[RMDB]
RNA sequence: GGGAACGACUCGAGUAGAGUCGAAAAACCUGGGGGUGACAUACACCGGAAAACCGUAGAGAUACGGUCCCCCUUGUGGUCGGUGUACAGGUGGUGCAUGGCUGUCGUCAGCUAGUGUCGUGAGCUGAGUAUUUAUGUAAUUCGUUACAUAAAUACUAAAAGAAACAACAACAACAAC
Reactivity to DMS in 0.01 (KOAc 150mM, MgCl2 10mM, bicine 150mM(pH8.5), 24C), signal-to-noise 2, nucleotides 027 to 126: a040c030c000u010g000g000g000g020g000u010g000a110c150a180u020a050c030a000c020c010g020g000a100a050a170a060c010c000g020u000a000g000a190g000a210u000a000c030g020g020u000c010c030c010c030c010u000u040g010u030g010g040u010c000g010g000u010g010u000a020c120a030g010g000u010g010g000u010g000c030a020u020g000g000c040u010g000u000c080g000u030c170a270g000c050u000a300g030u060g000u000c260g000u010g000a300g000c100u000g000
Reactivity to 2A3 in 0.01 (KOAc 150mM, MgCl2 10mM, bicine 150mM(pH8.5), 24C), signal-to-noise 2, nucleotides 027 to 126: a000c000c000u000g000g010g000g000g030u040g030a000c010a020u100a010c020a020c020c000g040g000a040a050a000a010c000c000g000u010a010g010a000g010a060u020a010c000g000g010u050c000c000c000c000c010u020u190g100u100g020g030u070c010g000g000u020g000u020a040c020a010g040g100u050g000g000u030g050c050a010u040g040g000c010u010g020u030c000g030u060c000a000g000c000u060a070g090u040g060u130c110g060u140g110a020g000c010u000g030